[RMDB]
RNA sequence: GGGAACGACUCGAGUAGAGUCGAAAAGCAUGUUUAUGUGAACCUAAGUAUGAAUAUCAGUGACUGUAGAUUAGAAGUACUGAUUAUAGCAUAGGCUGCUUGGUGUUCACUUUAUUUGCAUCUGUGAGUUUCCAACAAGCCCUAAGUUUACUGACAAGCAGCCACUAUAUUUCGAUAUAGUGGCUGCAAAAGAAACAACAACAACAAC
Reactivity to 2A3 in 0.01 (KOAc 150mM, MgCl2 10mM, bicine 150mM(pH8.5), 24C), signal-to-noise 1, nucleotides 027 to 156: g000c050a000u050g120u050u160u210a000u080g030u000g000a000a000c000c000u010a020a000g030u020a040u250g110a230a020u100a000u070c000a000g000u040g280a020c050u060g070u170a050g130a300u240u040a120g020a220a000g010u000a000c000u000g000a000u070u050a060u050a010g000c050a050u180a300g060g120c000u000g000c000u020u000g000g000u190g010u060u000c000a000c000u030u060u020a060u010u070u040g010c000a020u040c080u010g070u020g060a070g030u000u140u000c000c060a000a040c000a010a120g040c000c000c040u110a090a040g050u040u040u150a300c070u070g020a030c010a050a290

Source: RMDB library OK3TST, as collected in RNAgym. Chemical mapping of a 207-nucleotide RNA with 2A3. The 2A3 profile rests on 379 reads.